[RMDB]
Chemical mapping of a 207-nucleotide RNA with 2A3.
2A3 adducts were read by reverse transcription with SuperScript II with manganese.
RNA sequence: GGGAACGACUCGAGUAGAGUCGAAAAGUUCUCGGUUGGGUUCUCGACCGCGAGCACGCAGAAGGUUCCAAGUACAUCGACUUCGGCAUCGUGGACUGCCAGUCCCCGAACUCCCGCGUAUUCGGUUCCGAUCGUGAACUUGCCGAGUGCAUCAUGCCCAGGGGUACUACUUCGGUAGUACCCCUGGAAAAGAAACAACAACAACAAC
Reactivity to 2A3 in 0.01 (KOAc 150mM, MgCl2 10mM, bicine 150mM(pH8.5), 24C), signal-to-noise 1, nucleotides 027 to 156: g020u050u000c020u010c000g020g020u260u270g050g000g010u020u010c020u010c010g000a010c030c020g040c020g100a020g010c040a010c010g040c010a020g010a100a020g020g060u060u100c000c050a020a030g060u100a170c170a300u210c200g100a030c060u060u080c140g010g050c020a040u050c000g000u030g080g010a030c060u070g210c110c030a020g010u000c000c020c000c000g030a090a110c020u090c040c040c010g000c030g000u030a140u060u070c040g020g010u150u060c040c010g030a060u000c020g000u010g020a000a000c000u000u010g010c000c020g010a010g000u030g040c000a070u070c060a030u150g030c010